RNA sequence: GGGAACGACUCGAGUAGAGUCGAAAAGAUAUGGAUCCCAGGAGGAGGUGGGUGUCGGAAACGAUUUCGACCCACUACCCACCCUCCGGGAUCCUAAGUCAAAGACCCGUUGUUCGCAACGGGUCAACUUCUUAUUGCACUUCGGUGCAAUAAGAAGAAAAGAAACAACAACAACAAC
Reactivity to 2A3 in 0.01 (KOAc 150mM, MgCl2 10mM, bicine 150mM(pH8.5), 24C), signal-to-noise 2, nucleotides 027 to 126: g000a000u090a030u220g010g030a030u010c000c000c080a130g040g000a010g020g060a070g000g090u060g030g020g010u110g070u070c060g040g130a100a140a160c250g190a300u110u080u110c060g050a090c040c020c030a120c020u020a020c000c020c000a100c020c000c000u020c000c000g000g020g000a000u000c000c000u010a080a030g020u000c040a210a010a050g030a010c000c000c000g000u020u020g040u030u070c300g000c200a000a000c020g000g000g000u000c000a000a000
Reactivity to DMS in 0.01 (KOAc 150mM, MgCl2 10mM, bicine 150mM(pH8.5), 24C), signal-to-noise 2, nucleotides 027 to 126: g010a050u000a300u000g000g010a000u010c020c000c000a150g030g000a040g000g010a160g000g020u010g000g010g020u000g000u000c040g010g000a010a050a160c230g020a260u010u000u000c040g020a160c030c110c030a050c070u000a010c010c050c090a240c120c000c000u000c000c010g000g000g010a000u000c000c000u000a000a040g000u010c010a090a120a230g010a010c010c000c000g010u000u000g020u000u010c230g000c010a000a000c010g000g000g010u000c010a010a080